[RMDB]
RNA sequence: GGGAACGACUCGAGUAGAGUCGAAAAAUGAUUCGUAGUGUAAGACGAUCGACAGUCAUCGCUUGCCAGCAGGACCACCAAAGGAAUAGGCUUCGGUAACUACUCGAGAUCCCAAGCGAUAAAACAAAUCUAUUACUACAUUCGUGUAGUAAUAGAUAAAAGAAACAACAACAACAAC
Reactivity to DMS in 0.01 (KOAc 150mM, MgCl2 10mM, bicine 150mM(pH8.5), 24C), signal-to-noise 6, nucleotides 027 to 126: a080u020g010a060u000u000c050g020u010a080g010u010g020u000a080a090g000a060c040g000a050u000c030g020a090c150a090g000u000c090a050u000c030g010c040u000u000g010c020c030a120g020c060a080g000g010a090c050c060a040c060c050a030a080a120g000g000a080a070u010a080g000g000c100u000u000c010g020g010u000a070a140c010u000a000c000u000c000g000a010g010a120u000c000c000c000a100a090g000c160g010a090u000a050a040a070a060c150a070a070
Reactivity to 2A3 in 0.01 (KOAc 150mM, MgCl2 10mM, bicine 150mM(pH8.5), 24C), signal-to-noise 8, nucleotides 027 to 126: a000u070g010a020u050u060c030g030u060a100g050u040g050u240a070a050g080a160c020g010a030u050c050g080a080c050a040g070u100c030a020u020c010g000c020u010u050g020c010c010a020g020c030a030g050g060a030c020c010a050c020c040a110a060a060g100g010a080a110u070a080g020g010c000u020u010c010g000g030u020a150a130c010u000a000c000u000c000g000a010g000a030u010c000c000c010a000a010g050c070g130a120u160a170a120a020a020c070a030a170
Source information: Structure probing data (DMS and 2A3) for a 177-nucleotide construct. Conditions: 150 mM KOAc, 10 mM MgCl2 and 150 mM bicine (pH 8.5), 24 C. The DMS profile rests on 6,269 reads.